[RMDB]
RNA sequence: GGGAACGACUCGAGUAGAGUCGAAAAGACAGAAGGUGAAGGGAAAGCAGGCACAUCUUACAUGGCUGGAGCACGAGGAAGAGAGAGAGAGGACGUGCUACAGCCUUUCAAACCACCAGGUCUCCUGAGAACUCACUCACUAUACAGUACCAAGGGAGGUAUUAUCGUAGUUCGCUACGAUAAUACCAAAAGAAACAACAACAACAAC
Reactivity to DMS in 0.01 (KOAc 150mM, MgCl2 10mM, bicine 150mM(pH8.5), 24C), signal-to-noise 1, nucleotides 027 to 156: g020a160c030a040g000a080a060g010g000u000g030a080a110g010g020g000a030a050a060g060c030a110g020g030c030a100c040a080u000c040u000u030a110c090a050u000g000g020c020u030g000g010a030g050c010a030c030g000a120g020g040a040a040g000a180g020a120g000a150g000a200g020a050g000g000a180c000g030u000g010c020u010a000c010a040g040c010c010u000u000u010c040a040a100a060c070c020a090c050c040a070g000g000u010c050u040c010c030u010g030a080g000a020a060c020u000c000a080c040u010c030a060c020u000a090u010a050c070a080g000u000a060c050c010a020a110g020g020g020a140
Reactivity to 2A3 in 0.01 (KOAc 150mM, MgCl2 10mM, bicine 150mM(pH8.5), 24C), signal-to-noise 4, nucleotides 027 to 156: g090a010c080a020g090a060a030g040g020u090g040a030a030g000g020g020a070a050a030g060c040a040g050g000c030a040c010a130u080c090u130u150a090c060a160u170g010g000c010u000g010g010a000g000c000a000c020g010a040g070g050a130a030g040a030g010a000g000a000g000a010g020a020g150g030a030c010g000u000g000c000u010a020c000a010g000c000c000u010u020u030c020a020a020a000c000c020a020c020c030a010g030g020u020c020u030c040c000u020g020a050g030a100a030c010u010c070a030c020u040c010a030c010u050a040u080a160c060a060g110u070a040c060c020a020a040g080g010g000a060
Description
Structure probing data (DMS and 2A3) for a 207-nucleotide construct. For 2A3 the reverse transcriptase was SuperScript II with manganese. DMS adducts were read by reverse transcription with MarathonRT. The 2A3 profile rests on 3,374 reads. Reactivities are rounded to 0.1 and cut off at 0 and 3.